Chemical mapping of a 177-nucleotide RNA with 2A3 and DMS. For 2A3 the reverse transcriptase was SuperScript II with manganese. DMS adducts were read by reverse transcription with MarathonRT. It was measured as part of the RMDB library OK2TST.

RNA sequence: GGGAACGACUCGAGUAGAGUCGAAAAUCGAUCAUGAACUGGGUGCACCGCAUCGCGAGCAGCGGUUCUCCGAGAAGCUGGCCUGCCCCAACGGGCACGCGCUGGCCGUCGACGACCUGGAGCCGCGACUGGGAAUGAGAUUCGUCUCAUUCCCAGUAAAAGAAACAACAACAACAAC
Reactivity to 2A3 in 0.01 (KOAc 150mM, MgCl2 10mM, bicine 150mM(pH8.5), 24C), signal-to-noise 2, nucleotides 027 to 126: u050c000g010a030u030c040a090u160g150a160a060c050u050g040g020g030u050g000c040a010c080c000g030c000a080u050c050g020c040g040a060g070c020a010g010c000g010g000u040u000c030u000c000c010g030a030g020a060a010g000c010u030g010g020c000c000u010g000c000c000c000c000a030a040c070g010g000g010c030a000c080g000c030g000c020u020g020g030c030c010g040u010c000g020a060c010g020a040c010c030u060g110g050a020g020c010c000g000c010g040
Reactivity to DMS in 0.01 (KOAc 150mM, MgCl2 10mM, bicine 150mM(pH8.5), 24C), signal-to-noise 4, nucleotides 027 to 126: u000c030g000a080u010c100a130u000g000a090a120c040u010g020g000g000u000g010c050a050c060c020g000c010a090u000c080g010c040g000a080g040c010a140g000c020g000g010u010u000c030u000c040c040g010a090g040a110a130g030c010u000g010g010c010c030u000g000c000c010c000c140a120a170c300g000g000g020c010a020c140g010c110g020c000u000g000g010c000c100g000u000c030g000a140c070g020a130c060c040u010g010g010a090g010c000c010g000c040g010